This 177-nucleotide RNA was probed chemically with 2A3 and DMS.
2A3 adducts were read by reverse transcription with SuperScript II with manganese.
The reactions ran in a buffer of 150 mM KOAc, 10 mM MgCl2 and 150 mM bicine (pH 8.5), at 24 C.
[RMDB]
RNA sequence: GGGAACGACUCGAGUAGAGUCGAAAAGAUCCAAGGUUCGCCUUGGAUCCAAGGCGGCGAGUCUCGCUCAGCGGCGCGCGACAGGGCGCAGCGCAGCUGGAACAAUUUCGCCAUUCGUGGCGAAAAAGCUACUAUAAGGAUUCGUCCUUAUAGUAGCAAAAGAAACAACAACAACAAC
Reactivity to 2A3 in 0.01 (KOAc 150mM, MgCl2 10mM, bicine 150mM(pH8.5), 24C), signal-to-noise 3, nucleotides 027 to 126: g010a000u000c000c000a000a000g040g000u040u110c220g110c050c000u000u000g000g000a000u000c000c000a030a020g040g000c020g010g010c030g040a020g040u020c020u040c080g080c020u050c020a000g010c010g020g000c000g000c000g000c010g030a040c050a140g090g040g050c010g000c030a040g010c030g000c010a020g000c000u010g010g010a040a040c030a060a080u010u020u020c000g000c000c000a010u040u050c210g050u020g000g000c010g020a020a000a000a010a000
Reactivity to DMS in 0.01 (KOAc 150mM, MgCl2 10mM, bicine 150mM(pH8.5), 24C), signal-to-noise 8, nucleotides 027 to 126: g000a010u000c000c000a020a010g000g010u000u010c260g030c000c000u000u000g000g000a010u000c010c040a090a120g010g010c030g000g010c030g010a080g000u000c030u000c070g010c070u000c020a030g020c010g000g010c010g010c020g010c010g010a230c130a090g000g000g010c010g010c010a060g030c010g010c010a030g000c000u000g000g010a080a090c180a080a140u000u000u000c000g000c000c000a040u000u010c190g020u000g000g010c000g000a000a010a030a090a100
Reactivities are given for positions 27 through 126. DMS adducts were read by reverse transcription with MarathonRT. The DMS profile rests on 14,204 reads. It was measured as part of the RMDB library M2PK50.